Chemical mapping of a 177-nucleotide RNA with DMS and 2A3. 2A3 adducts were read by reverse transcription with SuperScript II with manganese.
RNA sequence: GGGAACGACUCGAGUAGAGUCGAAAAACUUCAUAGCCCUCAUUAUGGCUUAUGGCAAUUGCACAUUUGGUGCUCCAGAUGAUGCCUCUCGGUUACUUCAUACCGUGCUUGCAAAGGCUGAGUUAUGCUACUGUGAAUUGUUCGCAAUUCACAGUAGAAAAGAAACAACAACAACAAC
Reactivity to DMS in 0.01 (KOAc 150mM, MgCl2 10mM, bicine 150mM(pH8.5), 24C), signal-to-noise 4, nucleotides 027 to 126: a090c050u000u010c060a050u010a080g020c010c010c130u010c190a080u010u010a080u010g010g010c030u010u010a050u000g000g010c130a050a070u000u000g010c000a060c020a060u010u000u000g020g000u010g030c200u000c030c020a020g010a010u000g000a120u010g000c030c210u020c050u000c020g020g010u000u000a050c180u010u000c210a090u010a040c010c010g010u000g030c290u000u000g010c070a050a060a100g000g010c010u000g000a110g000u000u000a040u000g010
Reactivity to 2A3 in 0.01 (KOAc 150mM, MgCl2 10mM, bicine 150mM(pH8.5), 24C), signal-to-noise 3, nucleotides 027 to 126: a000c030u070u070c040a080u090a060g010c000c020c000u030c070a130u060u210a130u230g010g000c000u080u100a060u130g050g000c040a020a090u140u100g000c020a030c020a060u040u050u110g100g000u100g040c030u030c010c000a010g010a050u050g020a060u050g010c000c000u010c010u000c000g000g030u050u040a080c040u150u130c030a030u050a050c000c010g010u020g040c030u030u010g000c020a050a030a020g020g000c010u000g000a020g060u070u050a060u160g020
Description
For DMS the reverse transcriptase was MarathonRT. For DMS, 3,863 sequencing reads were counted. Values are in units of 0.01, from 0 to 300, in steps of 10.